[RMDB]
RNA sequence: GGGAACGACUCGAGUAGAGUCGAAAAGCAGUCUUUCGAGACUGCGAAUUGCUGAGCUAAGUAGAGGUCUCUUUUAUUGUGGUCUUCAUUCUAUCAUUAUUAAACCGGCGUCGAUAUUCGUAUCGACCACUAGACAAGGGUUCGCCCUUGUCUAGUGAAAAGAAACAACAACAACAAC
Reactivity to 2A3 in 0.01 (KOAc 150mM, MgCl2 10mM, bicine 150mM(pH8.5), 24C), signal-to-noise 4, nucleotides 027 to 126: g020c000a010g010u010c000u070u080u200c210g090a030g000a010c000u000g000c000g000a010a050u120u100g000c020u060g050a040g030c010u060a110a040g040u050a040g060a020g080g000u020c030u010c000u130u120u050u100a180u110u160g030u050g030g000u010c000u030u030c060a080u100u010c010u110a090u100c030a080u060u250a080u140u170a130a110a050c060c000g110g000c060g040u000c010g000a000u000a010u060u080c140g010u020a020u010c010g000a000c000
Reactivity to DMS in 0.01 (KOAc 150mM, MgCl2 10mM, bicine 150mM(pH8.5), 24C), signal-to-noise 4, nucleotides 027 to 126: g000c010a010g010u000c010u000u000u020c160g010a040g010a000c000u010g020c010g010a040a070u010u000g010c040u010g010a090g010c070u000a070a080g010u000a080g010a090g020g000u000c030u000c030u000u010u000u000a050u020u000g020u010g000g000u000c040u010u000c050a080u010u010c060u010a090u000c070a070u010u010a100u010u000a050a080a160c110c050g020g000c100g010u000c000g010a010u000a020u000u000c210g020u000a020u000c010g010a030c020